[RMDB]
RNA sequence: GGGAACGACUCGAGUAGAGUCGAAAAGAACAGUUCUGCUGAUGUGACAUCUGAUUUCUACGUGCGCAGUGAGCCAAAACAGCUGCUGUUUGCUAUGGAAAAAGUGGCGCCAAUCGAGAUUUUUGAGUACUACAGGUAUCUUCGGAUACCUGUAGUAAAAAGAAACAACAACAACAAC
Reactivity to DMS in 0.01 (KOAc 150mM, MgCl2 10mM, bicine 150mM(pH8.5), 24C), signal-to-noise 7, nucleotides 027 to 126: g010a100a120c110a090g010u020u010c030u000g020c040u000g010a060u010g020u010g010a080c060a050u020c040u000g020a170u010u000u000c030u000a080c150g020u000g010c040g000c020a050g000u010g010a050g000c040c040a050a060a090a090c230a120g000c020u010g010c020u000g000u000u000u010g010c030u000a060u010g000g000a030a020a050a110a070g020u010g000g010c020g010c010c060a060a070u010c080g010a100g000a090u010u010u010u010u020g020a130g010
Reactivity to 2A3 in 0.01 (KOAc 150mM, MgCl2 10mM, bicine 150mM(pH8.5), 24C), signal-to-noise 7, nucleotides 027 to 126: g050a050a020c030a030g020u050u050c020u050g060c020u070g030a050u080g040u040g060a020c000a050u060c020u030g040a120u010u040u020c010u030a060c060g090u090g020c010g000c020a020g020u090g180a020g040c030c030a060a100a090a090c050a030g000c010u020g000c000u010g010u020u070u100g010c020u030a050u140g050g010a040a020a020a020a030g030u020g020g000c010g000c010c020a030a050u060c030g030a020g010a130u020u050u060u090u180g080a070g110